This 177-nucleotide RNA was probed chemically with 2A3. 2A3 adducts were read by reverse transcription with SuperScript II with manganese. Values cover nucleotides 27 to 126. The data come from the RNA Mapping Database (RMDB), library OK1LIB. As a SHAPE reagent, 2A3 marks flexible, mostly unpaired nucleotides at the ribose 2'-OH. The reactions ran in a buffer of 150 mM KOAc, 10 mM MgCl2 and 150 mM bicine (pH 8.5), at 24 C.

[RMDB]
RNA sequence: GGGAACGACUCGAGUAGAGUCGAAAACAUCGCUUGGCUGCUGAGUGACAAUGGCCUUCGUGGAUGCCUCAACCGCGGCAGAAAUGACACGACUGAUCGUCUCCCAGUCCACAGUGGCGGCGGACGAACUGCCGUGCGCAUUCGUGCGCACGGCAGUAAAAGAAACAACAACAACAAC
Reactivity to 2A3 in 0.01 (KOAc 150mM, MgCl2 10mM, bicine 150mM(pH8.5), 24C), signal-to-noise 2, nucleotides 027 to 126: c050a060u130c050g060c020u010u140g120g000c030u050g030c000u000g070a090g040u060g090a070c000a150a070u280g040g000c000c020u000u000c010g000u060g040g040a070u080g080c020c060u130c010a120a170c060c010g080c090g000g010c000a000g000a010a170a040u210g000a090c030a030c050g010a040c030u000g030a030u050c110g030u010c090u000c030c030c000a040g040u010c070c000a090c000a220g030u080g010g030c000g000g000c020g000g030a000c000g070a050